[RMDB]
RNA sequence: GGGAACGACUCGAGUAGAGUCGAAAAAAGGCCAAUUUUUUCCUUUCUUCAUCCAAAAGCCUUCAGAAAGCUCCCUCUGCACCUCUCUGGAGGGUCAUAUUACAUUUUCCUGGGAACCUGCCCUGAACCACAAUCACAGAUUCGUCUGUGAUUGUGGAAAAGAAACAACAACAACAAC
Reactivity to 2A3 in 0.01 (KOAc 150mM, MgCl2 10mM, bicine 150mM(pH8.5), 24C), signal-to-noise 4, nucleotides 027 to 126: a000a000g080g000c020c010a030a020u070u020u000u010u070u060c020c020u060u050u030c030u070u060c020a150u080c050c060a030a080a010a080g020c010c000u030u030c020a050g090a110a070a020g010c010u000c000c000c000u010c020u020g020c030a050c000c010u030c010u020c030u060g070g020a040g000g000g020u020c010a030u030a080u180u100a050c050a070u040u060u030u050c010c010u000g040g000g010a040a060c000c010u050g060c000c010c000u020g010a020a030
Reactivity to DMS in 0.01 (KOAc 150mM, MgCl2 10mM, bicine 150mM(pH8.5), 24C), signal-to-noise 1, nucleotides 027 to 126: a030a050g000g010c130c010a020a000u010u000u060u020u020u000c070c000u000u010u000c010u030u010c030a150u040c040c070a040a100a050a080g050c000c020u020u030c150a070g000a080a140a140g040c100u000c000c000c000u000c060u050g000c070a000c020c050u000c050u030c070u010g050g000a070g000g000g040u010c090a050u000a070u050u050a100c110a070u000u030u000u000c020c020u000g000g000g000a030a090c010c040u000g040c070c040c010u010g000a090a130